[RMDB]
Conditions: 150 mM KOAc, 10 mM MgCl2 and 150 mM bicine (pH 8.5), 24 C. This 207-nucleotide RNA was probed chemically with DMS and 2A3.
RNA sequence: GGGAACGACUCGAGUAGAGUCGAAAAGGGACUGGCCCGAUGAAGCCCGGCAACCUAACUUUAUUUAAGCGUAAAGUGAAGGUGCUAAUUACAGCAAAAUGGUGUAUUCCGUUUUGGUAGAUAAGAGAAGCGUGACAUGAGUUCGCUCAUGUCACAACUUAACCCUUGGGUUCGCCCAAGGGUUAAGAAAAGAAACAACAACAACAAC
Reactivity to DMS in 0.01 (KOAc 150mM, MgCl2 10mM, bicine 150mM(pH8.5), 24C), signal-to-noise 2, nucleotides 027 to 156: g030g010g020a050c050u000g020g060c000c020c030g000a190u010g010a180a190g000c010c000c000g020g020c020a030a050c010c000u010a150a060c000u020u000u000a020u000u000u030a110a180g030c300g010u000a000a010a040g020u000g000a170a000g050g030u010g020c000u000a030a080u000u000a040c070a110g040c000a030a020a070a030u000g000g040u000g020u010a090u000u010c020c010g030u000u000u000u000g000g040u010a040g020a190u010a040a170g010a210g010a060a150g010c150g060u000g000a030c000a000u010g010a050g020u020u000c300g030c030u000c000a010u010g010u000c010a010c000a030a050
Reactivity to 2A3 in 0.01 (KOAc 150mM, MgCl2 10mM, bicine 150mM(pH8.5), 24C), signal-to-noise 2, nucleotides 027 to 156: g070g000g000a040c070u120g100g260c010c030c040g010a080u140g040a040a080g020c000c000c000g010g000c040a130a080c000c000u000a000a020c000u020u020u030a040u000u130u100a190a050g110c030g040u000a000a000a000g000u010g130a160a020g000g000u010g000c000u020a020a020u190u080a030c050a090g040c000a020a000a000a000u020g000g040u060g030u230a050u120u090c000c000g000u020u060u000u000g060g000u090a150g040a160u150a200a160g050a030g060a160a030g060c080g070u000g000a000c010a000u010g000a000g040u060u110c260g040c140u000c000a000u000g000u000c000a000c000a000a000

DMS adducts were read by reverse transcription with MarathonRT. Reactivities are given for positions 27 through 156. The data come from the RNA Mapping Database (RMDB), library M2RFPK. High 2A3 reactivity points to a flexible backbone, as in loops and unpaired stretches. 2A3 adducts were read by reverse transcription with SuperScript II with manganese.